[RMDB]
RNA sequence: GGGAACGACUCGAGUAGAGUCGAAAAGCAAGGAUCGCGUUCUGUAGGGUCACUUUACAGAACGUUAAACAAUAGGUGACUCGCCUGCCAUCAGCCCGCCAGCUGGCGGUUGUCAGGUUAAAUUAAAGAGCAUGGCUAAGUAUGUAGAACUGUCUGUGUACUCUUAGGCGUUCGCGCCUAAGAGUACAAAAGAAACAACAACAACAAC
Reactivity to 2A3 in 0.01 (KOAc 150mM, MgCl2 10mM, bicine 150mM(pH8.5), 24C), signal-to-noise 2, nucleotides 027 to 156: g060c040a020a050g050g010a060u050c040g010c000g000u000u000c000u020g000u000a020g000g020g000u000c000a020c000u040u010u000a000c000a000g010a000a020c020g000u040u040a070a030a020c120a080a120u010a070g010g000u000g000a000c000u010c010g000c000c000u000g000c010c000a030u020c010a070g010c010c010c030g040c000c030a040g000c040u070g000g000c000g010g010u040u040g010u020c020a000g010g000u000u000a000a000a000u190u100a090a010a000g110a010g010c120a150u010g010g000c020u030a090a060g000u100a150u220g100u110a070g060a260a110c130u100g010u050c010u050g030u030
The record gives the reactivity of an RNA of 207 nucleotides to 2A3. The RNA was probed in 150 mM KOAc, 10 mM MgCl2 and 150 mM bicine (pH 8.5) at 24 C.